[RMDB]
RNA sequence: GGGAACGACUCGAGUAGAGUCGAAAAGAUAUGGACCGGAGUGGACAUGCUUAGGUUCGGAAACGAACCAUAAGCAACAGCCAUGACGGUCCUAAGUCAAAAGUGAUUGAUGUUCGCAUCAAUCACAGCGUUAAGUUUUGUUCGCAAAACUUAACGCAAAAGAAACAACAACAACAAC
Reactivity to DMS in 0.01 (KOAc 150mM, MgCl2 10mM, bicine 150mM(pH8.5), 24C), signal-to-noise 2, nucleotides 027 to 126: g010a000u000a170u010g000g000a000c000c000g000g010a170g000u000g010g030a080c130a100u000g000c000u010u000a000g000g000u040u000c010g000g000a010a020a070c000g000a020a000c000c000a080u010a000a010g040c000a120a070c300a220g000c000c000a000u000g020a290c000g000g010u000c000c000u000a000a040g000u000c040a100a130a150a140g010u020g020a010u000u000g000a030u000g000u000u000c220g000c000a000u000c000a020a000u000c000a000c010a070
Reactivity to 2A3 in 0.01 (KOAc 150mM, MgCl2 10mM, bicine 150mM(pH8.5), 24C), signal-to-noise 1, nucleotides 027 to 126: g030a010u030a020u080g000g010a000c010c000g000g000a000g040u010g000g040a100c140a300u190g000c000u000u020a020g040g000u000u000c030g000g000a000a010a000c000g000a000a000c000c000a300u020a020a000g000c010a020a100c120a080g000c020c000a010u030g000a010c010g000g020u000c000c000u000a000a000g010u010c000a020a040a110a150g000u020g010a010u000u000g000a020u020g070u070u100c300g040c070a000u000c000a020a000u010c010a000c000a000